[RMDB]
RNA sequence: GGGAACGACUCGAGUAGAGUCGAAAACAUGGCGCUGCAGCCGGUGACUCGCCGAUCGGUGCCCGAAGAGGUCUUCGAGCAGAUCGCUACCGAUGUGCUCACCGGCGAGAUGCCGCCCGGCGAGGCGGUUCCCUCUGUGUUUCGACACAGAGGGAACAAAAGAAACAACAACAACAAC
Reactivity to DMS in 0.01 (KOAc 150mM, MgCl2 10mM, bicine 150mM(pH8.5), 24C), signal-to-noise 3, nucleotides 027 to 126: c090a170u020g000g000c060g010c050u000g000c110a300g000c020c020g040g020u000g000a050c050u010c040g030c070c000g000a050u020c050g000g030u030g020c000c060c020g010a050a020g000a300g010g050u030c030u010u000c070g000a070g000c050a150g000a080u000c080g020c250u030a150c110c010g000a000u000g000u010g030c150u010c020a030c000c000g000g000c000g040a040g020a140u010g000c070c040g020c000c000c050g040g020c060g000a120g010g020c030g010
Reactivity to 2A3 in 0.01 (KOAc 150mM, MgCl2 10mM, bicine 150mM(pH8.5), 24C), signal-to-noise 5, nucleotides 027 to 126: c100a090u160g070g000c020g010c050u100g030c070a030g000c010c000g000g000u010g020a020c010u010c110g000c010c010g060a050u130c060g070g140u120g010c000c010c020g030a150a030g090a130g150g060u110c060u140u150c150g010a010g020c030a020g010a210u100c070g030c090u100a080c060c030g020a020u060g050u070g170c010u010c030a000c000c000g010g000c010g000a000g000a010u130g030c010c000g010c000c020c000g010g030c020g020a070g030g010c050g030